[RMDB]
RNA sequence: GGGAACGACUCGAGUAGAGUCGAAAACAUGUGUACUUCGGUACACAUGAAAUGACCGCCAUUAUUGGCUAAGCCUACACGGACGGCCGGGUCAAAUGCCGAAAAUCGUUGCGUUCGCGCAACGAAAGACAAAAAUUUACUUCGGUAAAUUUUUGUCAAAAGAAACAACAACAACAAC
Reactivity to 2A3 in 0.01 (KOAc 150mM, MgCl2 10mM, bicine 150mM(pH8.5), 24C), signal-to-noise 2, nucleotides 027 to 126: c000a000u000g000u000g000u000a020c000u050u050c230g100g010u010a000c010a000c000a000u000g010a020a010a020u070g020a000c020c020g150c060c010a170u160u190a190u300u260g000g000c010u030a120a030g010c010c000u030a050c130a020c110g110g080a020c020g020g030c000c000g020g000g010u020c020a070a070a000u140g040c020c020g060a060a050a030a130u030c000g000u010u010g000c000g000u000u040c240g000c000g000c040a010a010c000g000a020a000a000
Reactivity to DMS in 0.01 (KOAc 150mM, MgCl2 10mM, bicine 150mM(pH8.5), 24C), signal-to-noise 2, nucleotides 027 to 126: c000a000u000g010u010g000u000a010c000u000u000c160g000g000u000a010c000a010c010a010u000g000a060a060a160u020g010a110c060c050g000c050c000a030u010u000a200u010u000g010g040c020u020a100a150g000c010c000u010a200c200a070c100g010g010a060c110g000g000c010c030g010g000g000u000c130a070a080a000u000g030c020c010g010a110a040a090a150u010c000g010u010u000g020c000g030u000u000c200g000c010g000c000a000a000c000g010a030a040a050